[RMDB]
RNA sequence: GGGAACGACUCGAGUAGAGUCGAAAACGACCCCCUGACGGGUCGGACAUAGCGUCAGGAUCAUCCGUGACAGUCACCACGGUAAUCAUGUGACUGAUGAUGGUUUUCCAUCUUAAUCUGACUGCGUCGUAGCAGUCUACAGUACUAUGACAUUAGAAAUAUACGUGCUAUUCGUAGCACGUAUAUUAAAAGAAACAACAACAACAAC
Reactivity to DMS in 0.01 (KOAc 150mM, MgCl2 10mM, bicine 150mM(pH8.5), 24C), signal-to-noise 3, nucleotides 027 to 156: c020g020a090c000c000c020c010c000u000g010a070c010g000g060g020u000c010g040g020a130c110a080u000a080g010c010g000u000c010a080g020g000a170u010c070a040u010c000c000g050u000g020a130c000a130g020u000c020a290c050c020a030c020g020g000u010a040a050u000c130a100u010g020u000g000a100c030u000g020a060u000g010a020u010g000g010u000u010u010u000c010c010a040u000c020u000u000a060a080u000c080u010g010a070c020u010g000c010g010u000c200g020u000a170g020c000a030g010u000c020u000a030c110a170g000u010a050c040u010a020u000g000a090c030a130u000u000a110g000a080
Reactivity to 2A3 in 0.01 (KOAc 150mM, MgCl2 10mM, bicine 150mM(pH8.5), 24C), signal-to-noise 5, nucleotides 027 to 156: c030g030a010c000c000c000c000c010u010g000a010c000g000g010g030u020c030g010g060a050c070a080u140a010g110c000g010u010c000a000g000g000a060u090c080a060u040c010c000g010u000g020a060c030a000g000u000c000a000c010c000a010c000g040g050u100a040a040u090c100a060u100g000u000g010a000c010u010g000a030u060g000a000u000g000g110u070u180u230u130c010c000a010u000c000u010u100a120a100u050c090u080g010a000c010u000g010c040g030u070c030g030u100a010g000c000a000g000u000c000u000a010c000a020g070u030a040c040u060a050u120g040a040c040a110u130u150a110g090a050
Chemical mapping of a 207-nucleotide RNA with DMS and 2A3. It was measured as part of the RMDB library OK3TST. For DMS the reverse transcriptase was MarathonRT. The reactions ran in a buffer of 150 mM KOAc, 10 mM MgCl2 and 150 mM bicine (pH 8.5), at 24 C.